[RMDB]
This 207-nucleotide RNA was probed chemically with 2A3. It was measured as part of the RMDB library VIROID. Values cover nucleotides 27 to 156. The RNA was probed in 150 mM KOAc, 10 mM MgCl2 and 150 mM bicine (pH 8.5) at 24 C. The 2A3 profile rests on 1,277 reads.

RNA sequence: GGGAACGACUCGAGUAGAGUCGAAAACUCGUCUUCCUCGGUCAACCUCCGAAGUUCCUCUUCUUCCUCCCUGCUGAGGCUCUUUCCUCCGGAGGAGAGCUGCUUUCUCUUGUUCUCCAGGGCCUUCCUUCUUCGGUGGUCCCGCCUCUCCUGUUCGGCUAUAUGGAUACUUCGGUAUCCAUAUAGCAAAAGAAACAACAACAACAAC
Reactivity to 2A3 in 0.01 (KOAc 150mM, MgCl2 10mM, bicine 150mM(pH8.5), 24C), signal-to-noise 2, nucleotides 027 to 156: c020u010c020g030u030c060u110u070c010c020u030c010g030g020u150c080a070a030c000c020u000c030c050g020a080a030g040u080u050c010c010u040c000u160u070c030u090u060c020c020u010c000c020c000u060g040c080u060g000a010g010g030c010u060c030u110u160u080c010c010u040c020c000g050g000a030g030g010a020g020a010g010c050u060g030c040u120u140u050c050u030c030u120u140g020u120u000c050u000c060c020a030g000g000g030c000c010u090u070c030c000u070u130c050u100u070c030g020g000u020g010g020u000c010c000c020g030c000c000u040c000u040c010c030u020g040u090u150c010g060